Conditions: 150 mM KOAc, 10 mM MgCl2 and 150 mM bicine (pH 8.5), 24 C. An RNA of 177 nucleotides, treated with 2A3 and DMS and read out base by base. Values are in units of 0.01, from 0 to 300, in steps of 10. For DMS, 1,944 sequencing reads were counted.
RNA sequence: GGGAACGACUCGAGUAGAGUCGAAAAGAUAUGGAUUGGGCUUCUUUUGACGGCUACUCGGAAACGAGUAAACCGAUAAGAAGUCAAUCCUAAGUCAAACAACUUGCAAGUUCGCUUGCAAGUUGAACGUCCUAUGUAACUUCGGUUACAUAGGACGAAAAGAAACAACAACAACAAC
Reactivity to 2A3 in 0.01 (KOAc 150mM, MgCl2 10mM, bicine 150mM(pH8.5), 24C), signal-to-noise 3, nucleotides 027 to 126: g000a000u040a010u070g010g020a020u020u040g200g160g040c020u030u000c030u050u300u150u290g230a080c030g000g000c010u010a000c000u030c000g000g000a050a020a010c010g000a010g000u020a030a040a050c020c010g050a120u120a300a010g000a010a000g000u000c010a000a000u000c000c000u000a040a000g000u000c030a080a040a150c000a040a030c010u010u000g000c000a040a000g000u130u140c280g130c150u000u000g000c000a000a010g000u000u000g000a020a010
Reactivity to DMS in 0.01 (KOAc 150mM, MgCl2 10mM, bicine 150mM(pH8.5), 24C), signal-to-noise 2, nucleotides 027 to 126: g000a020u000a220u000g000g000a000u010u010g010g020g000c000u000u000c000u000u010u010u000g010a160c100g040g000c180u000a000c010u000c010g010g000a080a060a110c000g000a030g000u010a010a120a090c000c010g000a120u000a050a000g000a000a010g000u000c000a010a000u010c000c000u000a010a110g000u010c040a130a160a220c010a000a010c010u000u000g000c000a020a010g030u010u000c300g000c010u000u000g000c000a000a000g010u000u010g000a080a120

Source: RMDB library TTRDEL, as collected in RNAgym.